This 207-nucleotide RNA was probed chemically with 2A3. Values cover nucleotides 27 to 156. 2A3 adducts were read by reverse transcription with SuperScript II with manganese. Conditions: 150 mM KOAc, 10 mM MgCl2 and 150 mM bicine (pH 8.5), 24 C.
[RMDB]
RNA sequence: GGGAACGACUCGAGUAGAGUCGAAAAACAGGUUCGCCUGUAAAAAAGAUAUGGAGUCUCCUACCCACCCGAUUGCAUGGCUUGGAUUUAUCGGAAACGAUUGUCAGCCAUGGGAUCGGAGGGAGACUCCUAAGUCAAAAAGCGGGUUCGCCCGCAACCCGUAAAAUACGUUCGCGUAUUUUACGGGAAAAGAAACAACAACAACAAC
Reactivity to 2A3 in 0.01 (KOAc 150mM, MgCl2 10mM, bicine 150mM(pH8.5), 24C), signal-to-noise 2, nucleotides 027 to 156: a000c000a000g030g030u030u050c130g100c020c000u020g000u080a090a090a050a000a050a010g130a040u200a090u130g000g000a010g000u000c010u030c010c050u110a300c040c020c000a020c000c000c000g000a000u000u040g270c000a010u010g020g010c010u050u140g240g000a020u290u300u190a040u050c000g020g030a050a090a020c020g040a010u010u020g000u030c000a000g010c000c000a000u000g050g000g000a000u000c000g000g000a000g000g010g000a000g000a000c000u010c000c010u000a000a000g000u000c030a040a080a020a240a020g010c000g060g040g030u000u090c200g170c050c000c000g040c010a020a080